[RMDB]
An RNA of 177 nucleotides, treated with 2A3 and DMS and read out base by base. High 2A3 reactivity points to a flexible backbone, as in loops and unpaired stretches. Conditions: 150 mM KOAc, 10 mM MgCl2 and 150 mM bicine (pH 8.5), 24 C.

RNA sequence: GGGAACGACUCGAGUAGAGUCGAAAAAUGCACUGGUUCGCCAGUGCAUGAUUACCGAGAAUGUACCUCGGUAUAAAAGUGCAACCCUUGGAAACAAGGGAAUUCCGAACCGAUUCGUCGGUUCGAAGAUGCUGUGUCAGUUCGCUGACACAGCAUCAAAAGAAACAACAACAACAAC
Reactivity to 2A3 in 0.01 (KOAc 150mM, MgCl2 10mM, bicine 150mM(pH8.5), 24C), signal-to-noise 1, nucleotides 027 to 126: a000u000g020c000a000c000u000g030g090u070u040c140g010c050c000a010g010u000g000c010a010u010g000a010u020u100a030c000c010g010a010g000a040a300u170g010u120a030c010c000u000c000g000g070u010a000u030a000a020a010a000g050u060g050c030a000a250c000c000c000u000u010g040g000a050a030a020c000a010a010g000g000g010a000a010u070u010c070c000g000a000a020c010c000g020a010u040u070c180g080u020c020g090g000u000u000c000g000a000a010
Reactivity to DMS in 0.01 (KOAc 150mM, MgCl2 10mM, bicine 150mM(pH8.5), 24C), signal-to-noise 1, nucleotides 027 to 126: a000u000g000c010a000c000u000g000g020u000u020c160g040c000c000a010g040u000g000c010a000u020g000a160u010u000a120c020c010g000a010g000a140a120u000g010u000a050c160c010u000c000g000g020u010a010u000a010a040a050a070g000u010g020c090a040a200c000c000c000u000u000g000g000a160a100a130c000a000a000g000g010g010a050a010u010u000c160c000g000a000a000c000c010g000a020u000u000c110g010u000c000g030g000u000u000c000g000a030a060